[RMDB]
Conditions: 150 mM KOAc, 10 mM MgCl2 and 150 mM bicine (pH 8.5), 24 C. An RNA of 177 nucleotides, treated with DMS and read out base by base.
RNA sequence: GGGAACGACUCGAGUAGAGUCGAAAAAAAUGUUAUAAGGAAGCAUUAAAUAUUCCUGAUGAAUGCACGAUAACAUUCACUAAAGAGAAAAUUGGUGCUAUUUGGACACAUGACACACCGCCAGUUGAAGCAUCUCUCUAUUCGUAGAGAGAUGCUUAAAAGAAACAACAACAACAAC
Reactivity to DMS in 0.01 (KOAc 150mM, MgCl2 10mM, bicine 150mM(pH8.5), 24C), signal-to-noise 2, nucleotides 027 to 126: a030a090a020u000g020u000u000a090u000a160a200g000g000a090a030g000c020a020u000u000a030a050a070u000a150u000u000c030c040u000g020a110u000g010a000a000u000g020c050a050c150g020a180u000a140a100c020a020u000u010c020a040c060u010a040a050a070g020a070g010a030a020a070a080u000u010g000g020u000g000c000u010a070u010u000u020g020g000a100c300a020c070a010u000g010a040c100a060c070a110c080c030g000c110c080a060g000u010u030g020